Conditions: 150 mM KOAc, 10 mM MgCl2 and 150 mM bicine (pH 8.5), 24 C. This 207-nucleotide RNA was probed chemically with DMS and 2A3. It was measured as part of the RMDB library OK3TST. DMS adducts were read by reverse transcription with MarathonRT. For DMS, 9,663 sequencing reads were counted. Values cover nucleotides 27 to 156.
RNA sequence: GGGAACGACUCGAGUAGAGUCGAAAAUGGUAGCUAAUCUUGUCAGUCCUGGCUUUUAAAAACAUCUUUCCCAGCCAUUUCUUAGGCUGUCUAGUUUCUUAUCAUAAAUACACAGCCAGUUGAGAAUUGAGUUACAUCUUAAGAGGAAAUUUGGGACACAACGUCUAUAGUUCGCUAUAGACGUUGUAAAAGAAACAACAACAACAAC
Reactivity to DMS in 0.01 (KOAc 150mM, MgCl2 10mM, bicine 150mM(pH8.5), 24C), signal-to-noise 4, nucleotides 027 to 156: u000g020g020u000a070g010c040u000a090a110u000c030u000u000g030u000c040a120g030u000c040c030u000g010g000c050u000u010u000u020a030a070a100a070a070c030a070u010c020u000u010u000c000c010c010a270g020c020c010a070u010u010u000c050u000u000a130g020g000c010u000g010u000c030u000a190g010u000u000u010c060u000u000a170u000c060a070u010a020a040a100u000a080c060a050c040a030g020c000c010a090g010u000u000g000a050g020a080a070u000u000g010a130g030u000u000a100c070a090u000c060u010u000a050a070g020a100g010g010a050a040a130u000u000u000g010g010g000a140c110
Reactivity to 2A3 in 0.01 (KOAc 150mM, MgCl2 10mM, bicine 150mM(pH8.5), 24C), signal-to-noise 5, nucleotides 027 to 156: u080g030g030u050a020g040c060u050a050a100u110c030u080u080g060u080c030a040g040u000c010c020u020g040g020c040u080u110u100u200a090a130a030a020a010c030a060u010c050u020u030u020c000c000c000a010g010c010c010a040u050u080u010c030u040u080a040g010g000c000u000g020u000c030u010a080g010u040u090u000c050u090u120a120u140c030a050u090a250a170a030u110a060c040a000c000a020g000c000c010a040g050u090u130g030a020g010a030a030u040u080g030a080g040u020u060a030c030a050u060c050u100u100a100a060g030a040g090g150a060a040a050u160u140u110g050g020g000a040c070